[RMDB]
RNA sequence: GGGAACGACUCGAGUAGAGUCGAAAAGUACUAGCGUUCGCGCUAGUACAAAGAAAGAAAGAUAGUCUGAGCGCACUGACUAGCGCAAAAGAAAGAAAGAAAAAAUCCCACUCUUCGGAGUGGGAAACACGCAUAUACUGUUCGCAGUAUAUGCGUGAAAAGAAACAACAACAACAAC
Reactivity to DMS in 0.01 (KOAc 150mM, MgCl2 10mM, bicine 150mM(pH8.5), 24C), signal-to-noise 3, nucleotides 027 to 126: g040u000a010c000u000a000g000c010g030u000u010c260g030c000g050c000u010a000g000u010a020c000a030a160a140g000a060a060a040g010a100a100a080g000a140u020a040g010u000c020u000g000a300g000c030g020c030a060c100u020g010a150c200u010a100g000c010g010c010a010a050a040a060g000a020a050a070g000a060a060a120g030a020a050a060a050a100a080u000c010c000c000a010c000u000c000u000u030c220g000g010a010g050u000g000g020g020a000a010a020
Reactivity to 2A3 in 0.01 (KOAc 150mM, MgCl2 10mM, bicine 150mM(pH8.5), 24C), signal-to-noise 1, nucleotides 027 to 126: g000u010a000c000u000a000g010c000g000u020u020c210g000c010g010c090u010a010g000u000a020c000a020a000a000g040a010a060a010g130a050a170a010g030a050u160a050g100u010c020u090g020a000g010c000g000c000a010c090u110g080a080c060u180a060g000c000g000c000a090a120a000a040g040a000a050a010g030a030a150a030g150a060a140a010a030a010a030u010c000c000c000a010c010u000c020u020u050c200g130g000a030g000u030g000g000g020a000a000a000

This 177-nucleotide RNA was probed chemically with DMS and 2A3. For 2A3 the reverse transcriptase was SuperScript II with manganese. DMS adducts were read by reverse transcription with MarathonRT. Conditions: 150 mM KOAc, 10 mM MgCl2 and 150 mM bicine (pH 8.5), 24 C.